[RMDB]
Structure probing data (2A3 and DMS) for a 177-nucleotide construct. The RNA was probed in 150 mM KOAc, 10 mM MgCl2 and 150 mM bicine (pH 8.5) at 24 C. For DMS, 5,656 sequencing reads were counted. DMS adducts were read by reverse transcription with MarathonRT.
RNA sequence: GGGAACGACUCGAGUAGAGUCGAAAACCCUGGUUAUUCGUAACCAGGGGUUGAGUGAAUCCUCUCAGUGCAUCGGUGGAUCAGACGAAACGCAUGGACGACAAUUACGGUUAUUCGUAACCGUAAAAUCAUAUCCCGUUUUCGAACGGGAUAUGAUAAAAGAAACAACAACAACAAC
Reactivity to 2A3 in 0.01 (KOAc 150mM, MgCl2 10mM, bicine 150mM(pH8.5), 24C), signal-to-noise 3, nucleotides 027 to 126: c000c000c000u000g030g000u030u010a050u050u080c220g020u020a000a000c000c000a010g010g010g020g000u090u190g040a050g030u130g090a090a100u060c000c020u040c020u020c040a040g010u020g070c010a020u020c060g100g000u090g070g090a090u110c050a030g050a090c010g040a040a070a020c050g000c030a040u050g030g010a010c020g020a010c040a060a070u050u000a000c020g020g000u010u010a010u020u070c160g040u040a020a000c000c000g000u000a030a000a000
Reactivity to DMS in 0.01 (KOAc 150mM, MgCl2 10mM, bicine 150mM(pH8.5), 24C), signal-to-noise 5, nucleotides 027 to 126: c010c000c000u000g010g000u000u010a020u000u010c190g020u000a000a000c010c000a010g010g010g000g010u000u000g010a090g010u000g010a120a110u000c030c020u010c080u000c030a060g000u010g020c040a050u010c040g010g010u000g010g010a060u010c080a060g010a060c040g000a040a070a090c070g010c040a040u010g000g010a060c060g010a060c120a090a140u000u000a000c000g010g000u000u000a030u010u010c160g020u000a000a010c000c000g000u000a000a010a080